Chemical mapping of a 177-nucleotide RNA with DMS and 2A3.
The DMS profile rests on 1,760 reads.
DMS adducts were read by reverse transcription with MarathonRT.
Values cover nucleotides 27 to 126.
The reactions ran in a buffer of 150 mM KOAc, 10 mM MgCl2 and 150 mM bicine (pH 8.5), at 24 C.
RNA sequence: GGGAACGACUCGAGUAGAGUCGAAAAGAUAUGGAGUUAGGACAUGAUCGCACAUCGGAAACGAUGUGAUGAUCAACAGCCUACUCCUAAGUCAAAAGAGAAAUCAAACUUCGGUUUGAUUUCUCAACCUUAUACGUGGCUUCGGCCACGUAUAAGGAAAAGAAACAACAACAACAAC
Reactivity to DMS in 0.01 (KOAc 150mM, MgCl2 10mM, bicine 150mM(pH8.5), 24C), signal-to-noise 2, nucleotides 027 to 126: g010a030u010a300u000g000g010a020g020u000u030a000g010g010a070c060a180u020g040a000u000c010g000c000a040c000a010u000c000g000g000a130a060a170c000g020a030u000g000u000g000a030u020g010a000u000c000a000a020c290a120g010c000c000u000a000c020u000c000c000u010a030a080g020u020c010a070a110a120a120g010a030g000a020a010a010u000c000a010a000a010c000u000u020c220g000g000u000u000u000g000a000u010u000u000c000u000c000a020a080
Reactivity to 2A3 in 0.01 (KOAc 150mM, MgCl2 10mM, bicine 150mM(pH8.5), 24C), signal-to-noise 2, nucleotides 027 to 126: g040a020u060a040u140g010g010a010g050u210u160a010g120g000a080c100a300u150g000a000u010c000g020c020a000c000a000u010c000g080g000a110a070a020c000g000a000u000g000u020g000a050u040g000a000u000c010a000a010c020a010g090c020c000u010a000c010u000c000c000u000a120a050g030u040c040a050a000a070a120g000a010g010a020a020a010u000c010a010a000a020c040u080u190c300g090g000u000u000u000g000a000u010u010u020c000u000c010a000a000